This 207-nucleotide RNA was probed chemically with DMS and 2A3. For 2A3, 2,253 sequencing reads were counted. It was measured as part of the RMDB library OK3TST. The reactions ran in a buffer of 150 mM KOAc, 10 mM MgCl2 and 150 mM bicine (pH 8.5), at 24 C. Values cover nucleotides 27 to 156.
RNA sequence: GGGAACGACUCGAGUAGAGUCGAAAAGAUCGUCAUUUCAUUGUCGGUCGCUCCGACAGCGGAAGCUCCAAGAACAAUUCUGUUUGUACCGGAAGUCCCACAAGACGCUGCCCUUCCGAUAACAAUGCAGUUUGUACAAGUCCCUAGAUUGGGGCAGUCGUAUACGGCUAUUCGUAGCCGUAUACGAAAAAGAAACAACAACAACAAC
Reactivity to DMS in 0.01 (KOAc 150mM, MgCl2 10mM, bicine 150mM(pH8.5), 24C), signal-to-noise 2, nucleotides 027 to 156: g000a020u000c040g020u000c030a160u000u020u000c060a090u000u030g010u000c020g040g030u010c190g010c170u000c050c010g020a090c010a060g000c020g000g010a130a120g030c070u000c050c030a060a050g020a130a150c000a020a090u000u000c030u000g030u000u000u000g020u010a050c050c010g040g000a020a030g010u000c020c010c050a220c050a080a120g000a110c080g020c040u020g010c020c070c000u000u000c030c040g040a050u000a000a120c020a040a070u010g030c020a040g000u010u010u000g020u000a140c100a060a180g020u000c000c010c000u000a150g030a260u000u000g000g030g030g020c000a040g030
Reactivity to 2A3 in 0.01 (KOAc 150mM, MgCl2 10mM, bicine 150mM(pH8.5), 24C), signal-to-noise 4, nucleotides 027 to 156: g020a070u090c030g080u040c060a070u070u180u110c040a070u090u070g030u030c010g000g010u040c030g010c040u020c010c010g070a060c030a050g070c050g040g030a050a030g010c010u010c040c040a070a000g050a040a000c020a040a060u160u050c000u020g040u020u090u040g020u040a030c030c020g020g030a030a020g050u090c030c030c020a060c020a040a070g130a040c100g000c080u100g020c020c010c010u030u000c020c000g030a020u060a120a030c040a040a030u160g000c000a000g010u020u050u050g020u060a030c010a080a030g050u030c020c000c000u090a150g030a230u010u150g010g000g020g000c000a000g010